[RMDB]
RNA sequence: GGGAACGACUCGAGUAGAGUCGAAAAACAGCGAAAGGCACAAGACUUCGAACAUUAUAGCAGUUAGUAGUUGCCUAAACCCAUUGCAAUAUAUGGGACAGUAGAGGUCGCAAUCCUAUACUGUGCGAAAAGUCGCAAGGUUUCGACCUUGCGACAAGAUAUACGGUACCUUCGGGUACCGUAUAUCAAAAGAAACAACAACAACAAC
Reactivity to DMS in 0.01 (KOAc 150mM, MgCl2 10mM, bicine 150mM(pH8.5), 24C), signal-to-noise 2, nucleotides 027 to 156: a100c050a070g020c030g000a140a060a090g000g030c020a090c130a160a120g030a090c060u000u010c020g010a170a130c030a120u010u010a110u000a100g050c030a130g000u000u000a060g030u000a100g000u010u000g000c000c010u000a030a100a180c010c000c010a050u000u010g000c130a110a120u000a150u010a030u000g010g000g010a040c020a020g010u000a020g000a050g030g010u000c230g050c200a110a130u010c000c000u020a030u000a020c030u000g000u000g030c060g010a060a080a040a170g040u000c020g040c000a010a000g000g020u000u000u000c300g010a070c030c000u000u000g010c000g020a010c000a000a010
Reactivity to 2A3 in 0.01 (KOAc 150mM, MgCl2 10mM, bicine 150mM(pH8.5), 24C), signal-to-noise 5, nucleotides 027 to 156: a000c010a010g020c020g050a190a050a030g010g000c020a010c030a070a080g070a030c040u090u080c100g090a130a060c070a220u210u240a140u210a160g060c060a020g020u010u090a030g020u060a030g020u110u060g010c010c000u030a080a020a030c010c000c000a000u000u000g010c000a030a000u030a000u010a000u130g020g000g010a000c000a000g010u010a010g010a010g030g010u040c080g070c160a010a060u050c000c000u010a000u000a020c010u010g010u010g010c000g060a040a040a000a040g000u000c000g000c000a000a000g010g000u040u060u100c130g040a040c000c000u000u010g000c020g000a000c000a000a000

Description: The record gives the reactivity of an RNA of 207 nucleotides to DMS and 2A3. It was measured as part of the RMDB library M2RFPK.